[RMDB]
RNA sequence: GGGAACGACUCGAGUAGAGUCGAAAAGCCGCCGUCGCCCGGCUGCAUGCGCAGGCAAAGGCGACGAAGGCAGAGCGCGAGGCGGCGGAGAGGCGCCAAUUGGAUGUGGCCGAGGACCGGCGCCGCCUGCACGAAAGAGAUUCGUCUCUUUCGUGCAAAAAGAAACAACAACAACAAC
Reactivity to 2A3 in 0.01 (KOAc 150mM, MgCl2 10mM, bicine 150mM(pH8.5), 24C), signal-to-noise 2, nucleotides 027 to 126: g000c010c000g050c050c000g040u000c000g000c000c040c000g180g100c110u010g000c020a050u300g030c110g000c010a060g270g000c090a130a050a090g000g020c010g000a000c000g000a020a040g020g000c010a000g040a030g000c160g000c070g070a010g000g030c010g010g000c070g040g030a150g020a040g050g020c040g050c000c050a050a120u170u190g160g020a160u210g060u120g220g040c050c040g040a120g020g080a060c020c040g020g100c010g040c000c000g000c000c010
Reactivity to DMS in 0.01 (KOAc 150mM, MgCl2 10mM, bicine 150mM(pH8.5), 24C), signal-to-noise 2, nucleotides 027 to 126: g010c010c010g000c260c010g010u000c010g000c010c010c110g020g010c010u000g000c020a150u020g040c220g020c000a050g010g020c050a110a120a110g000g010c000g000a010c000g020a040a160g010g030c020a070g000a100g010c100g000c060g010a090g020g020c020g000g000c000g010g000a110g000a170g020g010c050g010c010c010a080a080u020u000g000g000a090u000g000u000g000g000c000c040g010a140g010g000a140c050c030g010g020c030g000c000c010g010c000c020